[RMDB]
RNA sequence: GGGAACGACUCGAGUAGAGUCGAAAAUUUCCGGGCUUUACACGGUCGUAGAGCUUGCUUCGCGGUCGUAAUGGCGGAGACCUUUGAAUACAAGGGCUAGGGAUUCGGGGUGUAUGUCAGACGGUACUCACGACCUAAUCUUCGGAUUAGGUCGUGAAAAAGAAACAACAACAACAAC
Reactivity to 2A3 in 0.01 (KOAc 150mM, MgCl2 10mM, bicine 150mM(pH8.5), 24C), signal-to-noise 2, nucleotides 027 to 126: u060u020u000c000c000g010g000g000c030u120u100u100a080c040a000c030g090g010u010c020g030u030a030g000a000g020c110u150u090g030c030u050u070c000g060c060g050g060u010c000g060u070a090a070u110g000g000c010g000g010a020g060a110c010c010u070u180u230g180a300a110u250a200c090a020a040g020g000g000c020u020a020g000g000g070a100u110u000c040g000g040g000g100u000g000u030a050u070g060u000c040a030g030a130c000g020g010u050a020c020
Reactivity to DMS in 0.01 (KOAc 150mM, MgCl2 10mM, bicine 150mM(pH8.5), 24C), signal-to-noise 1, nucleotides 027 to 126: u000u010u000c000c000g020g010g060c070u000u000u010a040c210a070c150g020g000u000c010g000u000a060g020a000g050c000u030u010g030c050u020u000c050g010c100g030g000u050c000g000u000a100a080u020g000g030c050g000g000a100g000a160c060c060u000u000u000g000a210a040u000a090c060a020a180g000g000g010c090u030a030g000g000g000a190u000u000c110g000g000g020g010u000g010u000a020u010g000u000c070a080g020a130c090g000g010u020a080c150
Structure probing data (2A3 and DMS) for a 177-nucleotide construct.